The data come from the RNA Mapping Database (RMDB), libraries RFM100 and RFMREP. This 177-nucleotide RNA was probed chemically with DMS and 2A3. For 2A3 the reverse transcriptase was SuperScript II with manganese. The reactions ran in a buffer of 150 mM KOAc, 10 mM MgCl2 and 150 mM bicine (pH 8.5), at 24 C. Reactivities are rounded to 0.1 and cut off at 0 and 3.

RNA sequence: GGGAACGACUCGAGUAGAGUCGAAAAUCGAGGCAAUACUCGAUCGUUCAUACCUGAAUACAUAGGGUAUGAAACGCGAAACCCGCUGAAGUGAAACAUCUCAGUAAGCGGAGGAAAAGAAAGAGAAGAGUGUAAGGAGAUUCGUCUCCUUACACUCAAAAGAAACAACAACAACAAC
Reactivity to DMS in 0.01 (KOAc 150mM, MgCl2 10mM, bicine 150mM(pH8.5), 24C), signal-to-noise 5, nucleotides 027 to 126: u000c070g000a040g000g020c140a150a110u020a120c010u000c000g020a010u010c000g010u000u000c000a010u000a010c000c020u000g000a230a160u030a130c170a020u000a300g010g000g000u000a000u000g000a020a020a050c020g000c100g000a050a100a160c050c000c000g020c010u000g020a120a200g000u000g000a110a110a190c230a100u030c050u000c040a060g020u000a080a040g000c000g000g000a110g020g000a020a050a100a070g000a040a080a080g010a160g010a110a140
Reactivity to 2A3 in 0.01 (KOAc 150mM, MgCl2 10mM, bicine 150mM(pH8.5), 24C), signal-to-noise 8, nucleotides 027 to 126: u030c010g000a010g020g020c110a120a080u050a150c000u000c010g000a010u010c000g000u000u000c000a000u000a000c010c000u010g020a030a020u100a090c040a020u040a030g000g010g000u000a000u000g020a050a040a010c030g030c050g060a060a030a060c000c010c010g000c000u040g020a090a180g170u060g100a060a130a090c110a270u130c040u010c020a010g000u020a030a000g000c020g020g040a130g080g040a030a110a020a040g140a020a080a000g110a010g040a150a020